[RMDB]
RNA sequence: GGGAACGACUCGAGUAGAGUCGAAAAUCUGCUCUUUUGAGCAGAUCCUCUGUGUGCAGAGGAAACUCCAAUUAACAUUGCAAAGGAGCUCUACACCUUUUAUCUGGUGUAGAGAAAACAUCGUAUGCUUUUUUUUGUAUACGUAUGAGGCAAUGAAGUGGGUGGGUUUGUUCGCGGGCUCGUUUACAAAAGAAACAACAACAACAAC
Reactivity to DMS in 0.01 (KOAc 150mM, MgCl2 10mM, bicine 150mM(pH8.5), 24C), signal-to-noise 5, nucleotides 027 to 156: u000c000u000g010c000u000c000u000u000u000u000g010a030g030c000a020g000a030u000c000c010u010c010u000g020u000g030u000g050c040a050g020a030g020g000a060a060a080c040u000c020c030a100a140u000u010a130a160c020a050u000u000g010c020a100a100a160g010g010a170g010c000u000c000u000a010c010a010c000c010u000u000u000u010a100u020c220u000g020g040u000g010u000a000g010a020g000a010a030a070a130c020a050u000c010g020u000a030u000g020c000u000u000u000u000u000u000u000u000g010u000a020u000a010c000g010u000a020u000g010a200g010g010c020a040a040u000g010a060a100